[RMDB]
RNA sequence: GGGAACGACUCGAGUAGAGUCGAAAACGGCGUCCGUUCUCUAUUCUUUUCUUUUGAAAGAGGAGACGGGUCUCCGCCCGCCCCCAGCCCCGGGAUAGCCGAAGUGCCGAGGAAGAGCCGGAGGAGGAUACGAUCAAGUUCGCUUGAUCGAAAAGAAACAACAACAACAAC
Reactivity to DMS in 0.01 (KOAc 150mM, MgCl2 10mM, bicine 150mM(pH8.5), 24C), signal-to-noise 9, nucleotides 027 to 129: c010g000g010c170g010u000c000c010g030u060u040c010u000c000u040a180u060u010c020u000u030u030u040c080u030u050u040u080g010a010a010a010g000a030g000g000a030g000a000c020g010g000g020u030c050u010c050c010g000c060c020c030g050c030c020c010c030c020a130g020c040c050c020c030g030g000g010a060u040a040g010c000c040g030a100a060g040u050g040c060c050g020a050g010g010a050a040g030a060g030c040c060g000g020a050g000g000a030g010g020a060u000a100
Reactivity to 2A3 in 0.01 (KOAc 150mM, MgCl2 10mM, bicine 150mM(pH8.5), 24C), signal-to-noise 9, nucleotides 027 to 129: c010g010g000c010g020u020c010c010g070u300u060c010u000c000u030a300u170u040c020u050u090u050u050c080u090u300u150u300g050a020a010a000g010a000g000g010a000g000a000c000g000g000g020u020c030u000c010c010g030c010c000c000g040c000c000c000c000c000a020g030c010c000c000c020g030g010g010a050u070a010g010c010c010g030a070a020g050u060g080c030c010g010a010g020g010a020a040g000a010g020c020c020g030g000a020g000g010a010g010g000a020u060a100